Overview: Conditions: 150 mM KOAc, 10 mM MgCl2 and 150 mM bicine (pH 8.5), 24 C. Structure probing data (DMS and 2A3) for a 177-nucleotide construct. DMS (dimethyl sulfate) methylates the pairing face of unpaired adenines and cytosines. DMS adducts were read by reverse transcription with MarathonRT. 2A3 adducts were read by reverse transcription with SuperScript II with manganese.
[RMDB]
RNA sequence: GGGAACGACUCGAGUAGAGUCGAAAAAGACGGUGGAGUUAAGAAACUGCAGAAGGUUACACAGAGCCUUAAAGGUGAUAUUAAUUCGAAGCCUGAGAGUCAAGAAACUGUGCGCUCCUUCAGGAGAGCGCGUGUAAUUGUUCGCAAUUACACGCGCAAAAGAAACAACAACAACAAC
Reactivity to DMS in 0.01 (KOAc 150mM, MgCl2 10mM, bicine 150mM(pH8.5), 24C), signal-to-noise 3, nucleotides 027 to 126: a110g010a060c080g020g010u000g000g010a090g010u000u010a050a110g010a110a150a060c110u000g000c090a120g000a040a020g000g010u000u010a060c040a050c090a030g010a170g000c080c010u000u020a050a090a140g020g010u000g000a060u010a130u010u000a040a120u000u000c040g000a150a280g000c010c000u010g020a180g010a010g010u010c070a060a100g000a090a090a110c070u000g000u000g000c080g000c020u000c010c010u010u010c150a100g030g000a070g000a160
Reactivity to 2A3 in 0.01 (KOAc 150mM, MgCl2 10mM, bicine 150mM(pH8.5), 24C), signal-to-noise 1, nucleotides 027 to 126: a000g060a010c040g000g020u020g070g050a050g020u040u020a060a030g020a090a150a030c030u070g000c020a060g050a090a010g080g000u090u120a030c080a010c020a020g070a020g000c020c000u020u020a060a070a010g000g000u000g000a040u070a040u300u180a110a120u060u150c050g070a060a030g030c000c020u050g000a060g020a010g040u040c020a060a020g050a140a140a040c030u010g020u020g000c020g000c030u010c000c070u070u080c020a030g080g000a000g050a000